RNA sequence: GGGAACGACUCGAGUAGAGUCGAAAACUCCUAAUUUCCAAGGGAGGGUAAAUUUCAAGAGUGUGAAGAAAAUUGUGGCUGAUCAGCACAUCUUCAACCCUGAUCAUAUCAGCCUCACAAUGCUGGGCAUGCUCAUGCUGUUCGCAGCAUGAGCAUGAAAAGAAACAACAACAACAAC
Reactivity to 2A3 in 0.01 (KOAc 150mM, MgCl2 10mM, bicine 150mM(pH8.5), 24C), signal-to-noise 2, nucleotides 027 to 126: c000u000c000c040u060a150a130u160u120u020c080c030a010a100g110g000g010a030g070g000g000u160a100a120a130u150u230u170c120a100a000g060a040g100u050g030u050g070a000a140g070a070a170a100a110u160u100g040u030g090g040c030u060g040a080u060c020a010g050c070a020c000a100u020c000u120u090c040a020a120c000c010c040u040g010a090u070c060a000u010a020u110c000a010g010c030c000u070c000a040c010a040a180u110g030c000u030g000g030g080
Reactivity to DMS in 0.01 (KOAc 150mM, MgCl2 10mM, bicine 150mM(pH8.5), 24C), signal-to-noise 3, nucleotides 027 to 126: c110u000c010c020u020a080a140u010u000u000c090c090a120a250g010g010g000a050g010g000g020u010a050a100a150u000u000u020c040a060a090g010a030g020u000g030u000g000a070a110g010a050a070a110a100u000u000g010u010g020g010c000u000g010a050u000c170a150g020c060a030c040a030u010c010u000u000c060a070a080c060c060c010u000g000a060u010c120a030u000a080u000c090a040g000c030c040u000c080a080c250a060a080u000g010c080u000g000g030g000
Record summary
This 177-nucleotide RNA was probed chemically with 2A3 and DMS. Source: RMDB library OK2TRN, as collected in RNAgym. In probing experiments dimethyl sulfate is read out at A N1 and C N3, which are open when not base-paired. For 2A3 the reverse transcriptase was SuperScript II with manganese. For DMS, 1,598 sequencing reads were counted. The 2A3 profile rests on 1,379 reads.